RNA sequence: GGGAACGACUCGAGUAGAGUCGAAAACGUUCGCGAGCGCCGUGCGGAUCGUCACGCGCUGCCCGAGCAUCGCGUCGAGGUCGAGGCCGGGAUCGGUCGCGAGCGCGUAGACAUCCCACUGGAAGUACCAUACUCACCGCUUCGGCGGUGAGUAUGGAAAAGAAACAACAACAACAAC
Reactivity to DMS in 0.01 (KOAc 150mM, MgCl2 10mM, bicine 150mM(pH8.5), 24C), signal-to-noise 2, nucleotides 027 to 126: c070g000u000u000c000g000c030g020a040g020c040g010c010c020g020u000g020c020g030g010a000u000c080g000u010c020a020c010g000c000g030c020u000g000c010c140c110g000a170g010c010a060u000c030g010c030g000u010c130g000a140g000g000u000c010g020a100g020g020c000c020g010g000g010a070u010c050g020g000u000c040g030c020g000a020g020c000g000c000g040u000a100g000a150c200a110u000c000c010c000a110c150u040g010g000a120a060g030u000a100
Reactivity to 2A3 in 0.01 (KOAc 150mM, MgCl2 10mM, bicine 150mM(pH8.5), 24C), signal-to-noise 1, nucleotides 027 to 126: c010g000u040u000c020g000c030g030a070g010c070g000c010c010g040u110g040c060g010g010a060u060c060g120u020c140a010c020g020c010g010c030u020g020c000c010c020g020a090g000c000a070u040c040g000c030g000u090c120g030a040g060g000u050c030g050a200g100g000c020c010g000g090g010a120u160c000g000g150u020c000g000c010g000a000g000c020g000c000g030u050a000g000a070c010a060u000c000c030c000a020c150u160g050g040a190a010g090u070a060